[RMDB]
RNA sequence: GGGAACGACUCGAGUAGAGUCGAAAAGAUGUUUCAAGAGAACAAAAAUUGUAGCCCCAAAAUCAUUGCUAAGUUUAGAUCAGUCACACGGAAGAGGAAAACCGCAAGACAGUGCUUCAAAGCAGACCAGCUUCAUACUCUGUUAGAAAUCACCUAACUCAGCUAAUAUAUUCGUAUAUUAGCUGAGAAAAGAAACAACAACAACAAC
Reactivity to 2A3 in 0.01 (KOAc 150mM, MgCl2 10mM, bicine 150mM(pH8.5), 24C), signal-to-noise 3, nucleotides 027 to 156: g040a020u050g020u010u040u020c070a100a020g050a020g050a110a070c070a010a080a090a100a080u090u080g050u050a050g050c030c000c010c000a040a040a030a040u110c040a050u060u150g030c020u060a100a040g030u070u110u080a040g010a050u030c020a030g060u060c020a020c000a010c140g040g020a040a030g010a110g030g000a010a070a000a110c020c050g010c020a050a000g050a050c010a020g050u030g040c020u070u100c080a070a110a040g010c010a020g030a060c030c000a010g040c040u010u030c020a010u010a080c040u020c020u040g030u060u040a010g080a050a050a020u160c010a040c150c030u200a040a080
Reactivity to DMS in 0.01 (KOAc 150mM, MgCl2 10mM, bicine 150mM(pH8.5), 24C), signal-to-noise 2, nucleotides 027 to 156: g000a130u000g000u000u000u000c010a100a130g070a190g030a050a080c030a070a090a110a160a260u000u010g010u010a170g010c070c010c020c040a040a070a060a070u000c060a060u000u010g000c040u010a010a140g030u000u000u020a070g000a060u010c010a120g000u000c060a060c080a020c060g000g010a110a060g020a110g020g020a090a080a080a120c030c030g010c030a080a130g010a080c040a090g010u000g020c000u000u000c060a050a070a040g000c020a080g000a050c010c100a060g040c030u000u000c050a080u000a060c050u000c010u000g010u020u000a130g000a050a030a050u000c030a040c020c020u000a070a160